[RMDB]
RNA sequence: GGGAACGACUCGAGUAGAGUCGAAAACGAUCUGACAAAACUAUAUUGACGUUGAAGCAAUUCCGGAAUUCUCUGGUCUGAAGAAGCGUGGCUCGGGUACAGGAGCUGCGGACCGAGCUCCAGCAAAGAUUAUGGUAUGCUUCGGCAUACCAUAAUCAAAAGAAACAACAACAACAAC
Reactivity to 2A3 in 0.01 (KOAc 150mM, MgCl2 10mM, bicine 150mM(pH8.5), 24C), signal-to-noise 2, nucleotides 027 to 126: c020g040a160u030c050u080g040a050c060a040a110a060a050c070u120a090u060a120u300u140g050a030c050g010u030u070g020a060a010g020c040a070a080u090u070c030c050g040g050a050a080u250u050c030u020c040u130g040g020u000c010u030g090a060a050g040a100a000g100c010g030u050g000g000c010u010c050g050g000g030u150a090c060a110g120g030a030g010c020u030g030c050g000g020a020c030c000g000a000g030c000u020c010c010a030g000c040a060a050a040
Reactivity to DMS in 0.01 (KOAc 150mM, MgCl2 10mM, bicine 150mM(pH8.5), 24C), signal-to-noise 3, nucleotides 027 to 126: c090g000a090u000c030u020g010a080c090a050a060a070a080c120u000a080u010a100u020u000g010a050c090g010u000u010g000a100a130g000c070a060a170u000u000c040c040g020g000a060a120u000u010c040u000c020u000g020g000u000c010u000g010a100a120g020a070a090g030c070g000u000g020g020c000u000c010g020g010g040u000a070c100a110g030g010a060g010c010u000g000c030g010g000a060c040c030g010a050g000c270u000c020c010a070g010c130a070a100a080